[RMDB]
RNA sequence: GGGAACGACUCGAGUAGAGUCGAAAAUAUUAUAGCGCACUAAAGAGGCUGAUCUUUAGUUACCAAGGAACUUUAGUGCUGAGGUCCGAGUUCCAAGGUCCCAUGUCGGACCUUAGCACUAAUUGAACGCUUAAAAUUGAUUCGUCAAUUUUAAGCGAAAAGAAACAACAACAACAAC
Reactivity to DMS in 0.01 (KOAc 150mM, MgCl2 10mM, bicine 150mM(pH8.5), 24C), signal-to-noise 4, nucleotides 027 to 126: u020a070u000u010a120u010a100g010c100g020c190a050c010u000a020a010a010g000a040g000g010c180u010g010a110u000c010u000u000u000a010g000u000u000a080c100c060a060a180g010g010a100a110c100u000u000u000a010g000u000g010c000u000g010a020g000g000u000c000c010g010a020g010u010u000c210c110a050a110g000g010u000c000c000c010a130u000g000u000c010g010g000a010c000c000u000u000a000g000c000a020c000u000a000a000u000u010g000a100a130
Reactivity to 2A3 in 0.01 (KOAc 150mM, MgCl2 10mM, bicine 150mM(pH8.5), 24C), signal-to-noise 3, nucleotides 027 to 126: u120a040u170u200a140u200a160g100c070g010c050a000c020u020a020a000a010g030a020g140g080c210u150g120a110u020c000u000u020u010a010g010u020u050a050c020c030a060a050g170g020a100a120c030u070u010u030a000g000u010g000c000u000g000a000g000g000u000c000c010g010a030g050u170u090c080c010a020a000g050g010u000c010c000c000a040u070g070u020c000g000g000a000c000c000u000u010a010g000c000a000c000u010a000a000u010u020g020a050a010
About this RNA
An RNA of 177 nucleotides, treated with DMS and 2A3 and read out base by base. For 2A3 the reverse transcriptase was SuperScript II with manganese. Values cover nucleotides 27 to 126. The reactions ran in a buffer of 150 mM KOAc, 10 mM MgCl2 and 150 mM bicine (pH 8.5), at 24 C. DMS adducts were read by reverse transcription with MarathonRT. Reactivities are rounded to 0.1 and cut off at 0 and 3. It was measured as part of the RMDB library M2PK90.